[RMDB]
RNA sequence: GGGAACGACUCGAGUAGAGUCGAAAACUCAACGCAAACCAUAUUGAUGAAAAAUAUGUUAGUUUACGGCUUAGGCGGUAUGAUCGUGCCAUUUAUCGGCAUUAAGCUCAUUGAUCUCAUCAUCCAACGCCAUAGAAGCCUUCGGGCUUCUAUGGCGAAAAGAAACAACAACAACAAC
Reactivity to 2A3 in 0.01 (KOAc 150mM, MgCl2 10mM, bicine 150mM(pH8.5), 24C), signal-to-noise 2, nucleotides 027 to 126: c000u000c000a060a020c030g030c110a190a090a000c000c000a000u000a020u000u090g230a120u240g000a170a000a000a000a060u100a020u080g060u050u000a080g000u000u050u060a030c000g000g100c060u090u300a140g020g000c100g010g010u170a060u040g080a050u080c070g000u010g000c030c020a140u300u300u080a100u170c030g070g000c000a030u020u040a070a040g020c000u000c160a080u030u060g050a040u030c000u000c000a100u000c000a000u000c000c040a000a060

The record gives the reactivity of an RNA of 177 nucleotides to 2A3. Values cover nucleotides 27 to 126. The data come from the RNA Mapping Database (RMDB), library OK1LIB.